The record gives the reactivity of an RNA of 170 nucleotides to 2A3 and DMS.
For 2A3, 3,276 sequencing reads were counted.
The RNA was probed in 150 mM KOAc, 10 mM MgCl2 and 150 mM bicine (pH 8.5) at 24 C.

RNA sequence: GGGAACGACUCGAGUAGAGUCGAAAAUGUAUGUCAAUGUUUACAGGAGCACUAGCCCAGACCCCAAAUUUGUUGAUAAAUACUAUGCUUUUCUUAAUAAGCACUUUUCUAUGAUGAUACUGUCUGAACCCUUCCCACUUCGGUGGGAAGAAAAGAAACAACAACAACAAC
Reactivity to 2A3 in 0.01 (KOAc 150mM, MgCl2 10mM, bicine 150mM(pH8.5), 24C), signal-to-noise 3, nucleotides 027 to 129: u000g020u030a030u030g080u040c050a020a020u040g000u040u040u060a060c020a000g090g000a000g020c000a030c040u070a070g000c010c000c000a040g040a130c000c000c000c000a000a090a090u130u120u070g020u030u040g050a030u040a070a090a010u150a000c100u060a040u110g020c000u080u040u030u000c050u030u150a130a070u170a040a060g010c020a040c010u000u000u060u010c020u060a100u070g020a010u070g040a050u020a060c000u080g030u030c000u000g030a030a010c000c010
Reactivity to DMS in 0.01 (KOAc 150mM, MgCl2 10mM, bicine 150mM(pH8.5), 24C), signal-to-noise 3, nucleotides 027 to 129: u030g080u040a090u010g040u010c050a010a000u020g010u050u000u050a040c150a000g000g030a000g000c050a090c080u000a100g040c060c030c000a000g010a180c080c030c030c020a060a100a090u020u010u040g050u050u050g000a000u070a090a100a050u040a110c150u070a130u050g000c030u030u080u000u010c130u050u040a140a080u090a060a050g000c030a000c180u000u000u000u000c070u000a070u000g020a030u000g010a110u070a050c100u010g020u050c020u010g020a220a080c000c060